[RMDB]
RNA sequence: GGGAACGACUCGAGUAGAGUCGAAAAAUGUCACGGACAAAUUCCGUGACCGUGUUAGGCCCUCAUUAAAGAGCGUACCAGGCCACGUUUCAACCUGCAAGGGUUGGGGCGGCUUAGCAAUUAAGGCGAAUGAAAAGAAGUUCGCUUCUUUUCAUUCAAAAGAAACAACAACAACAAC
Reactivity to DMS in 0.01 (KOAc 150mM, MgCl2 10mM, bicine 150mM(pH8.5), 24C), signal-to-noise 6, nucleotides 027 to 126: a070u000g000u000c000a020c000g000g000a040c190a100a090a170u010u000c000c010g010u000g000a000c000c180g020u000g000u000u000a090g000g010c030c010c010u000c040a080u010u010a080a090a150g000a030g010c050g020u000a090c040c040a110g010g010c010c040a120c040g010u010u000u000c000a000a000c000c010u000g010c300a130a150g000g000g000u000u000g000g000g010g010c000g000g000c040u010u000a050g000c100a070a130u010u010a070a070g010g010c200
Reactivity to 2A3 in 0.01 (KOAc 150mM, MgCl2 10mM, bicine 150mM(pH8.5), 24C), signal-to-noise 4, nucleotides 027 to 126: a000u080g000u000c000a000c000g000g030a040c100a100a230a080u200u000c010c000g000u000g000a000c000c010g090u080g090u110u080a040g020g000c010c010c000u000c010a030u040u300a110a110a030g030a010g010c030g010u020a040c000c010a010g050g000c000c020a050c050g000u000u030u010c000a000a000c000c010u020g030c060a080a100g060g000g000u010u010g020g000g010g000c000g000g000c000u050u050a020g010c040a100a170u170u120a150a040g100g010c050